[RMDB]
RNA sequence: GGGAACGACUCGAGUAGAGUCGAAAAAAGAUAUGGACACUAGGGAGCUGGAGAAGCUUCUAUAAUCCUUAAUCGGAAACGAUUAAGGGUAGAAGCGUAACAGCGAAGAACUAGUGUCCUAAGUCAACAAUGGGAUAAUGUUCGCAUUAUCCCAUUGAAAAGAAACAACAACAACAAC
Reactivity to 2A3 in 0.01 (KOAc 150mM, MgCl2 10mM, bicine 150mM(pH8.5), 24C), signal-to-noise 1, nucleotides 027 to 126: a010a020g080a040u130a040u110g000g000a000c000a010c010u000a010g050g000g000a040g050c020u020g090g030a050g030a050a010g000c000u010u000c010u010a040u020a030a120u140c010c000u000u010a010a010u000c000g020g010a070a040a050c010g000a000u010u000a000a000g000g000g000u000a010g000a000a010g010c010g000u010a050a010c000a020g000c020g040a070a010g010a010a010c000u010a000g000u000g000u020c000c000u000a000a000g010u010c000a020a060
Reactivity to DMS in 0.01 (KOAc 150mM, MgCl2 10mM, bicine 150mM(pH8.5), 24C), signal-to-noise 6, nucleotides 027 to 126: a110a070g020a040u000a300u000g010g000a020c000a000c000u000a010g000g000g000a070g020c000u000g010g010a140g020a160a280g000c010u000u000c000u000a050u010a300a110u010c000c000u000u000a000a000u000c000g000g010a140a100a200c010g000a010u000u000a010a010g030g010g020u000a000g010a010a010g000c000g000u010a140a250c010a000g000c000g010a110a140g000a100a160c020u000a010g010u000g000u000c000c000u000a010a090g010u000c020a110a200
The data come from the RNA Mapping Database (RMDB), library TTRDES.
An RNA of 177 nucleotides, treated with 2A3 and DMS and read out base by base.
For DMS the reverse transcriptase was MarathonRT.
The RNA was probed in 150 mM KOAc, 10 mM MgCl2 and 150 mM bicine (pH 8.5) at 24 C.